Source: RMDB library OK1LIB, as collected in RNAgym. This 177-nucleotide RNA was probed chemically with 2A3 and DMS.
RNA sequence: GGGAACGACUCGAGUAGAGUCGAAAAGCUACGUAAUCUUUGUCGAAGAACGCCAGUAAGGUUCUGGCUGCUUGACAAAGGACCCAGGUCGAUGAGAGCAGGGAGUUGGAUGGUCUAUCGACCAAACGUUAAUACUAUUAUUCGUAAUAGUAUUAACAAAAGAAACAACAACAACAAC
Reactivity to 2A3 in 0.01 (KOAc 150mM, MgCl2 10mM, bicine 150mM(pH8.5), 24C), signal-to-noise 9, nucleotides 027 to 126: g060c060u130a050c120g170u170a060a100u050c000u000u000u010g000u000c050g050a040a020g040a180a060c090g000c000c000a020g020u150a160a170g300g080u200u090c000u000g000g000c010u030g020c010u010u030g000a000c000a000a010a000g000g010a020c010c010c020a010g000g010u000c000g000a020u090g220a020g010a010g090c030a030g050g120g070a200g070u140u130g110g030a090u020g010g070u000c000u010a020u020c010g000a010c010c000a050a030a010c050
Reactivity to DMS in 0.01 (KOAc 150mM, MgCl2 10mM, bicine 150mM(pH8.5), 24C), signal-to-noise 7, nucleotides 027 to 126: g010c090u030a060c170g010u020a080a050u030c000u000u010u000g000u000c000g010a030a050g020a110a120c210g000c000c000a000g020u020a130a140g030g030u030u020c000u000g000g020c000u000g010c080u000u000g010a000c010a000a010a010g000g010a120c010c000c000a100g000g010u000c010g000a010u000g000a050g000a030g000c020a050g000g010g010a100g010u000u000g000g000a110u000g000g010u000c010u000a050u000c020g000a010c010c010a020a040a040c170